[RMDB]
RNA sequence: GGGAACGACUCGAGUAGAGUCGAAAAGAUAUGGAUCUAGCUUGCGAAGAACUCUGGUCGGAAACGACCAGAGGGGAGCAAACUAGAUCCUAAGUCAAAGCGUCAACUCCUUCGGGAGUUGACGCAAUCAUAUCGUACUGUUCGCAGUACGAUAUGAAAAAGAAACAACAACAACAAC
Reactivity to 2A3 in 0.01 (KOAc 150mM, MgCl2 10mM, bicine 150mM(pH8.5), 24C), signal-to-noise 1, nucleotides 027 to 126: g010a000u010a010u050g000g000a000u010c000u000a010g010c010u010u020g010c030g230a300a020g010a110a010c000u000c000u010g010g010u000c000g020g000a000a010a000c000g000a010c010c000a000g010a000g000g000g010g030a090g000c000a000a000a000c000u000a000g000a000u000c000c000u000a000a000g000u000c030a130a080a050g000c000g000u000c000a010a000c000u020c020c000u060u170c300g080g000g000a000g020u000u000g010a010c010g010c010a000a000
Reactivity to DMS in 0.01 (KOAc 150mM, MgCl2 10mM, bicine 150mM(pH8.5), 24C), signal-to-noise 4, nucleotides 027 to 126: g000a010u000a020u010g000g010a000u000c000u000a000g010c030u000u010g020c000g020a100a160g010a060a260c000u000c000u000g000g000u000c000g020g000a010a010a020c000g010a010c000c000a010g000a010g000g000g010g020a040g020c000a000a000a030c000u000a000g000a000u000c000c000u000a000a050g000u000c000a100a090a160g000c000g010u000c000a010a010c000u000c000c010u000u010c210g020g000g010a010g010u000u000g000a000c000g010c000a000a000